[RMDB]
Chemical mapping of a 177-nucleotide RNA with 2A3 and DMS. Source: RMDB library VIROID, as collected in RNAgym. The 2A3 profile rests on 1,739 reads. The reactions ran in a buffer of 150 mM KOAc, 10 mM MgCl2 and 150 mM bicine (pH 8.5), at 24 C.
RNA sequence: GGGAACGACUCGAGUAGAGUCGAAAACGAGGUGCAAGAAAAAAAGAGCAAGAUAUUACGGAGGCGGGUGUUCCCCUCCCGGAGCGGGUUCGAGGCGAGCUACCUCGGAGGGGAUCCGAGUUCCAACGUAUAUCUGGAAGUUCGCUUCCAGAUAUACAAAAGAAACAACAACAACAAC
Reactivity to 2A3 in 0.01 (KOAc 150mM, MgCl2 10mM, bicine 150mM(pH8.5), 24C), signal-to-noise 2, nucleotides 027 to 126: c020g040a040g000g010u070g020c060a110a100g180a170a150a020a010a000a020a010g050a020g050c020a040a000g020a070u110a030u230u180a050c070g020g010a010g020g030c030g010g030g040u040g100u090u030c000c000c000c000u000c040c010c030g070g020a050g030c170g030g040g000u050u040c030g000a020g030g260c090g040a020g000c010u220a300c010c010u000c000g000g000a010g040g000g040g010a000u030c020c000g000a000g070u050u000c000c000a020a010c040
Reactivity to DMS in 0.01 (KOAc 150mM, MgCl2 10mM, bicine 150mM(pH8.5), 24C), signal-to-noise 2, nucleotides 027 to 126: c070g010a080g010g020u000g000c060a060a080g030a010a010a050a130a080a070a090g000a050g020c030a030a070g010a100u010a040u000u010a130c120g010g010a080g010g000c040g020g000g050u010g000u010u010c000c010c000c000u000c010c020c150g010g000a050g020c080g020g000g000u000u010c050g020a160g000g030c090g010a070g020c010u010a070c100c020u000c150g010g010a020g000g010g000g000a040u000c020c040g000a110g010u000u000c000c000a070a120c190